Chemical mapping of a 177-nucleotide RNA with DMS and 2A3. Reactivities are rounded to 0.1 and cut off at 0 and 3. DMS adducts were read by reverse transcription with MarathonRT. For 2A3 the reverse transcriptase was SuperScript II with manganese.
RNA sequence: GGGAACGACUCGAGUAGAGUCGAAAAAAGAUAUGGAUACGCUGCGAAGCUAACCGUACAACAGCAGCUCUCGGAAACGAGAGCUGACAUGUACGAGUUAGCGAUGUAUAGCGUAUCCUAAGUCAAACAUGCCAUGUCUGUUCGCAGACAUGGCAUGAAAAGAAACAACAACAACAAC
Reactivity to DMS in 0.01 (KOAc 150mM, MgCl2 10mM, bicine 150mM(pH8.5), 24C), signal-to-noise 1, nucleotides 027 to 126: a050a110g000a040u020a300u010g020g000a000u000a000c000g020c010u010g040c030g000a140a300g060c000u000a000a000c000c000g000u030a000c000a000a040c270a200g030c000a010g010c010u000c000u020c000g020g000a100a080a110c000g030a000g020a010g000c000u000g000a030c100a200u020g000u010a010c000g000a200g040u000u000a000g010c010g020a020u000g020u010a040u010a040g030c010g000u000a000u000c000c000u000a010a080g030u000c040a180a090a300
Reactivity to 2A3 in 0.01 (KOAc 150mM, MgCl2 10mM, bicine 150mM(pH8.5), 24C), signal-to-noise 1, nucleotides 027 to 126: a000a000g100a030u100a010u100g000g000a000u000a020c000g000c000u030g040c050g130a190a020g010c000u020a000a010c030c000g000u000a010c000a170a050c040a180g130c020a000g000c000u030c020u000c010g060g010a080a170a060c040g000a050g010a000g000c000u000g010a010c000a100u040g000u000a010c000g060a080g220u000u000a000g010c020g000a000u020g020u060a190u190a050g000c010g000u010a000u000c000c000u000a010a010g070u040c000a090a040a000